[RMDB]
RNA sequence: GGGAACGACUCGAGUAGAGUCGAAAAGCAAGUCGCAUCGCAAAACCGCGGCAAGUGGAGUUAGCGAGAUGAGGCUGGGUUUUGGCUUCCUUAAGCAAUCGGUCACCGAGAAGGUGUGGUCGUUACCUAGACAGUUUUCUGUUCGCAGAAAACUGAAGCUCCAUAAAGAGUUCGCUCUUUAUGGAGCAAAAGAAACAACAACAACAAC
Reactivity to 2A3 in 0.01 (KOAc 150mM, MgCl2 10mM, bicine 150mM(pH8.5), 24C), signal-to-noise 4, nucleotides 027 to 156: g060c030a030a060g010u000c000g030c060a040u060c020g000c010a010a050a010a050c030c010g020c010g130g020c270a210a040g000u040g000g010a080g030u050u070a020g020c030g040a080g020a150u070g020a010g030g020c010u010g220g000g000u020u030u040u050g040g010c000u050u100c040c010u050u100a060a040g050c050a110a170u090c050g070g020u080c040a010c030c040g030a080g060a210a040g020g030u040g020u040g020g030u010c010g000u000u050a210c010c000u030a050g030a120c000a010g000u000u010u000u010c000u000g030u010u060c180g000c060a010g000a000a000a000a000c000u000g000a020a000
Reactivity to DMS in 0.01 (KOAc 150mM, MgCl2 10mM, bicine 150mM(pH8.5), 24C), signal-to-noise 2, nucleotides 027 to 156: g000c030a070a020g040u000c020g000c010a090u010c020g000c040a090a090a110a140c030c050g030c060g050g010c110a080a150g010u000g000g050a150g000u010u000a170g020c080g010a080g000a070u000g000a040g000g020c000u000g020g020g000u000u000u000u000g000g000c000u000u000c110c030u000u000a050a100g000c050a060a120u010c050g040g020u000c000a090c020c010g020a180g020a130a150g030g020u010g030u010g020g020u000c060g020u000u000a030c020c020u020a140g020a240c000a010g020u000u000u000u000c000u000g020u000u010c300g000c010a030g000a030a000a000a010c020u000g000a090a160